[RMDB]
RNA sequence: GGGAACGACUCGAGUAGAGUCGAAAACAUUCUGUGCGAGCAGUUUGCCGAUGGCUUCGCGAAUAGAAGGAUGCCAGUUAACGGCGCGAUUGACCGCGUCAUUGAGCGUCAGGUUGCCCGGCGCGGCGAAACCUGUAACGUUCGCGUUACAGGUUUCAAAAGAAACAACAACAACAAC
Reactivity to DMS in 0.01 (KOAc 150mM, MgCl2 10mM, bicine 150mM(pH8.5), 24C), signal-to-noise 2, nucleotides 027 to 126: c080a070u010u010c010u000g020u000g020c110g020a060g000c070a070g010u010u000u010g000c040c030g010a110u000g000g020c060u010u010c030g020c050g000a080a080u000a110g000a100a090g000g000a060u010g010c010c030a130g010u000u000a060a080c080g020g000c000g010c050g000a120u020u010g020a110c170c010g000c030g020u000c030a110u010u010g010a080g000c000g010u010c050a070g030g020u000u000g010c020c020c000g010g020c020g000c040g000g000c180
Reactivity to 2A3 in 0.01 (KOAc 150mM, MgCl2 10mM, bicine 150mM(pH8.5), 24C), signal-to-noise 1, nucleotides 027 to 126: c000a030u030u060c020u020g040u020g030c000g010a030g040c040a030g000u040u020u070g080c030c020g070a100u080g000g040c000u000u020c020g070c060g220a120a120u070a070g180a190a030g030g010a040u070g000c000c000a000g020u050u140a110a040c060g000g030c010g000c020g000a050u140u290g110a130c000c130g010c000g000u030c010a040u000u090g070a020g030c010g010u060c020a040g160g010u060u100g030c060c000c000g020g000c000g000c000g040g010c040
An RNA of 177 nucleotides, treated with DMS and 2A3 and read out base by base. The reactions ran in a buffer of 150 mM KOAc, 10 mM MgCl2 and 150 mM bicine (pH 8.5), at 24 C. The DMS profile rests on 1,502 reads. For DMS the reverse transcriptase was MarathonRT.